[RMDB]
RNA sequence: GGGAACGACUCGAGUAGAGUCGAAAACGGAUAGUGUGCAGAAGAUACGCCUAGCAGCCUUCGAGUACCGAGACCCGGAUGCGCGUUCGAAACUUUCCAUCGUGGGCAUCAUUCAGACCUCUGACCGCAAGUUCGUGGUCUGUCACCGUCGGCGCAGGGUCGUGUAGUAAUUCGUUACUACACGACCAAAAGAAACAACAACAACAAC
Reactivity to 2A3 in 0.01 (KOAc 150mM, MgCl2 10mM, bicine 150mM(pH8.5), 24C), signal-to-noise 4, nucleotides 027 to 156: c030g010g010a060u060a080g120u140g030u020g100c030a010g040a130a020g050a110u100a110c030g030c010c040u090a070g040c050a030g000c000c000u030u070c030g050a050g040u010a020c020c040g030a030g060a090c010c020c000g030g020a020u040g000c040g000c010g060u060u080c020g040a060a070a110c030u070u110u050c050c010a030u040c080g040u100g040g060g000c070a060u020c020a020u200u100c010a050g020a110c000c020u060c020u140g010a030c030c030g070c140a090a010g070u040u030c030g030u040g010g000u010c000u010g020u020c000a010c030c010g000u020c010g040g000c020g010c060a080g000
Reactivity to DMS in 0.01 (KOAc 150mM, MgCl2 10mM, bicine 150mM(pH8.5), 24C), signal-to-noise 2, nucleotides 027 to 156: c000g040g010a090u000a080g030u020g020u020g070c000a150g000a100a140g000a170u000a050c060g030c010c030u000a100g030c060a130g000c050c030u010u000c030g000a080g030u010a060c060c070g000a260g040a110c020c000c030g000g000a040u000g020c140g000c040g030u000u010c070g020a150a090a090c070u000u000u000c050c070a130u020c060g020u000g050g000g020c000a090u000c170a140u010u010c020a100g010a040c030c030u000c050u020g020a030c020c000g030c130a060a250g020u000u000c080g010u000g030g020u000c000u010g010u000c100a070c010c030g000u030c060g020g020c020g020c040a060g010